Chemical mapping of a 177-nucleotide RNA with 2A3 and DMS. Conditions: 150 mM KOAc, 10 mM MgCl2 and 150 mM bicine (pH 8.5), 24 C. 2A3 adducts were read by reverse transcription with SuperScript II with manganese. Reactivities are given for positions 27 through 126. In probing experiments dimethyl sulfate is read out at A N1 and C N3, which are open when not base-paired.
[RMDB]
RNA sequence: GGGAACGACUCGAGUAGAGUCGAAAAUGGUGUUAAGUGGAAUAAGUGGAAAAAUAUACAUAUAUGUACAGGGGGCUACAUAUAUGUAUAUGCCCCCUCAUCUCAGUAUAAGUAGGUAUAAGGUGGAGCAUCAUUAGUAUUUCGAUACUAAUGAUGCAAAAGAAACAACAACAACAAC
Reactivity to 2A3 in 0.01 (KOAc 150mM, MgCl2 10mM, bicine 150mM(pH8.5), 24C), signal-to-noise 4, nucleotides 027 to 126: u130g020g010u050g030u140u070a170a080g020u080g040g050a110a100u100a150a040g030u120g030g030a020a070a020a060a000u030a000u000a010c000a000u040a000u010a000u020g000u010a030c090a090g020g000g030g030g000c010u000a000c010a010u030a000u020a000u030g010u000a010u000a000u010g000c010c000c000c000c000u010c000a030u020c000u010c020a030g040u060a060u010a180a040g070u080a020g070g030u040a090u040a120a040g050g020u040g020g020a040
Reactivity to DMS in 0.01 (KOAc 150mM, MgCl2 10mM, bicine 150mM(pH8.5), 24C), signal-to-noise 5, nucleotides 027 to 126: u030g010g020u000g010u010u000a050a150g030u010g000g000a070a070u010a080a080g020u020g010g000a020a060a050a120a060u000a010u000a000c000a010u000a020u010a020u010g000u010a040c140a140g010g010g020g010g010c130u000a000c020a010u010a030u010a020u010g010u000a010u010a010u010g000c100c020c020c000c020u000c020a020u020c060u000c070a080g020u010a050u020a040a130g020u020a030g000g030u010a050u010a050a070g000g020u010g000g000a210